The record gives the reactivity of an RNA of 177 nucleotides to DMS and 2A3.

[RMDB]
RNA sequence: GGGAACGACUCGAGUAGAGUCGAAAACAGAGACAGUGACUGUCUGACAGUCAGUCUCUCUCACUGUGACAGUGUCACAGAGUCUGAGACACAGAGACACUCAGACUCUGAGUGUCACUGAGACUCACCGGAUGCUACUUUUCGAAGUAGCAUCCGGAAAAGAAACAACAACAACAAC
Reactivity to DMS in 0.01 (KOAc 150mM, MgCl2 10mM, bicine 150mM(pH8.5), 24C), signal-to-noise 1, nucleotides 027 to 126: c180a040g010a040g020a020c020a110g000u000g020a010c030u000g000u000c110u000g060a090c090a030g000u000c000a090g000u000c010u000c000u000c140u000c060a100c060u000g010u000g000a010c000a040g020u000g010u000c030a170c010a030g000a020g000u000c000u000g000a000g020a290c300a050c000a010g010a040g000a160c240a020c020u000c000a000g000a040c020u000c000u000g000a030g010u020g000u000c000a010c000u000g000a000g000a110c120u000c040a160
Reactivity to 2A3 in 0.01 (KOAc 150mM, MgCl2 10mM, bicine 150mM(pH8.5), 24C), signal-to-noise 1, nucleotides 027 to 126: c060a000g000a000g010a010c010a070g140u030g160a010c010u010g040u220c200u170g200a040c010a030g010u020c010a000g010u030c010u000c020u000c010u000c030a070c090u080g020u030g040a000c010a080g060u010g000u110c000a030c000a000g010a000g020u000c030u000g010a000g040a030c020a000c020a030g220a000g010a100c000a000c030u030c000a020g000a140c020u000c010u010g030a020g000u080g020u000c000a010c010u020g000a010g060a030c020u030c060a090

For 2A3 the reverse transcriptase was SuperScript II with manganese. Conditions: 150 mM KOAc, 10 mM MgCl2 and 150 mM bicine (pH 8.5), 24 C. Reactivities are given for positions 27 through 126.